An RNA of 177 nucleotides, treated with 2A3 and DMS and read out base by base. For DMS, 2,226 sequencing reads were counted. The data come from the RNA Mapping Database (RMDB), library OK1LIB. 2A3 adducts were read by reverse transcription with SuperScript II with manganese. The RNA was probed in 150 mM KOAc, 10 mM MgCl2 and 150 mM bicine (pH 8.5) at 24 C.

RNA sequence: GGGAACGACUCGAGUAGAGUCGAAAAGAAAGGCGCGCCUGACAUCUAAAUGGAGUUGCCGCGAGGCCCUCUUCCGCCUGUUGGCACGUCGAGAUCCUGGGAGACGAUCGCGGUCAGUCCACAGAAAGGGUAUUCAAAUCUUCGGAUUUGAAUACCCAAAAGAAACAACAACAACAAC
Reactivity to 2A3 in 0.01 (KOAc 150mM, MgCl2 10mM, bicine 150mM(pH8.5), 24C), signal-to-noise 2, nucleotides 027 to 126: g030a010a070a000g040g000c030g000c000g010c000c010u050g030a040c000a080u030c030u140a060a140a110u100g030g010a070g060u100u060g060c040c000g010c040g010a030g030g040c000c000c080u000c020u070u000c030c020g050c000c010u130g030u170u100g050g000c020a020c040g060u020c000g010a040g010a050u040c010c020u030g000g040g000a040g020a000c090g040a030u000c000g000c020g000g010u010c000a020g030u000c010c000a040c000a040g160a080a050a020
Reactivity to DMS in 0.01 (KOAc 150mM, MgCl2 10mM, bicine 150mM(pH8.5), 24C), signal-to-noise 2, nucleotides 027 to 126: g010a060a030a070g000g000c100g000c110g000c000c020u010g000a090c240a090u030c070u020a040a060a180u000g010g000a020g030u000u010g000c050c030g000c040g010a090g000g000c160c030c110u000c030u000u000c010c010g000c030c000u050g020u020u000g000g000c130a140c180g040u020c030g030a110g020a060u000c010c050u010g020g000g010a090g020a050c110g020a100u020c000g000c000g000g010u000c060a070g020u010c000c030a020c050a180g000a120a100a090